[RMDB]
RNA sequence: GGGAACGACUCGAGUAGAGUCGAAAAAGGUGCUCCAAGUGGGGAACAGAGAGCCCAAGUGGCUCAUCCAAGGUUGCACAGCAGACUGGAGUCAGACCUUCUGCUGGGGAAGGUGGGCAAGGUAGCACCGAUGGGCCUCAGGGAGCAUCCACCUACCUCUAAGUCCAUUUUUCGAAAUGGACUUAGAAAAAGAAACAACAACAACAAC
Reactivity to DMS in 0.01 (KOAc 150mM, MgCl2 10mM, bicine 150mM(pH8.5), 24C), signal-to-noise 2, nucleotides 027 to 156: a030g040g010u010g000c010u000c020c000a070a160g020u010g000g000g010g030a130a130c060a090g010a150g000a150g000c000c000c000a120a100g050u000g040g030c000u010c000a070u010c080c060a060a090g010g010u000u000g050c060a170c070a090g000c020a070g000a060c060u000g030g000a210g030u000c110a140g010a110c020c000u000u000c000u000g010c020u000g000g000g000g000a120a040g000g030u000g000g010g030c000a080a070g010g030u000a060g050c010a100c040c020g000a030u000g000g010g020c000c020u030c030a120g000g010g010a030g010c010a030u000c010c020a080c010c000u000a100c100c060
Reactivity to 2A3 in 0.01 (KOAc 150mM, MgCl2 10mM, bicine 150mM(pH8.5), 24C), signal-to-noise 3, nucleotides 027 to 156: a000g000g000u000g000c000u010c000c040a020a110g110u080g030g040g000g020a090a000c070a080g220a030g000a040g110c000c000c040a060a050g110u240g050g000c020u000c010a040u010c010c010a040a010g070g000u070u180g020c030a010c010a050g060c010a000g030a050c140u090g020g040a050g070u150c080a040g130a120c010c000u020u020c020u030g030c010u030g000g010g070g040a050a070g050g030u190g020g020g050c070a040a020g030g020u190a050g000c040a020c010c000g010a050u040g000g020g000c000c030u030c030a020g030g020g000a000g000c000a020u040c000c000a030c000c000u030a070c010c020
Record summary:
An RNA of 207 nucleotides, treated with DMS and 2A3 and read out base by base. The 2A3 profile rests on 1,351 reads. For DMS the reverse transcriptase was MarathonRT. It was measured as part of the RMDB library OK3TST. The reactions ran in a buffer of 150 mM KOAc, 10 mM MgCl2 and 150 mM bicine (pH 8.5), at 24 C. In probing experiments dimethyl sulfate is read out at A N1 and C N3, which are open when not base-paired. Reactivities are given for positions 27 through 156.